[RMDB]
RNA sequence: GGGAACGACUCGAGUAGAGUCGAAAAUGCGCACUGUGUUAAGUUAGUGAAACGCGGGUUCAUCAAUUUGACAGAGUGAUGUGCAUUGAUGAACGAAGCUCGGAACAACCCGGAUUCUUCGGAGAAAGGGUUUAAUUAUCUUCGGAUAAUUAAACCCAAAAGAAACAACAACAACAAC
Reactivity to 2A3 in 0.01 (KOAc 150mM, MgCl2 10mM, bicine 150mM(pH8.5), 24C), signal-to-noise 1, nucleotides 027 to 126: u000g000c000g040c000a000c000u030g010u000g000u090u010a020a010g000u000u010a020g000u010g010a020a020a000c070g080c100g080g220g010u000u000c000a050u000c000a010a000u000u000u020g000a000c000a000g070a000g040u040g070a110u090g040u010g000c000a000u000u000g080a030u110g010a030a000c000g000a000a000g000c010u030c010g010g020a050a040c020a010a090c000c000c000g000g000a010u050u000c000u030u020c000g050g000a030g010a020a070a020
Reactivity to DMS in 0.01 (KOAc 150mM, MgCl2 10mM, bicine 150mM(pH8.5), 24C), signal-to-noise 6, nucleotides 027 to 126: u000g000c000g000c000a010c020u000g000u010g010u000u000a010a020g000u000u000a050g030u000g000a000a020a040c020g030c220g010g000g030u000u000c000a000u000c040a000a000u000u000u000g000a000c000a000g010a030g010u010g000a120u020g010u050g030c000a010u000u000g000a280u050g010a090a050c030g000a300a190g000c160u000c000g000g010a060a100c180a070a270c060c000c000g010g000a120u000u010c010u000u010c050g010g010a110g000a080a150a110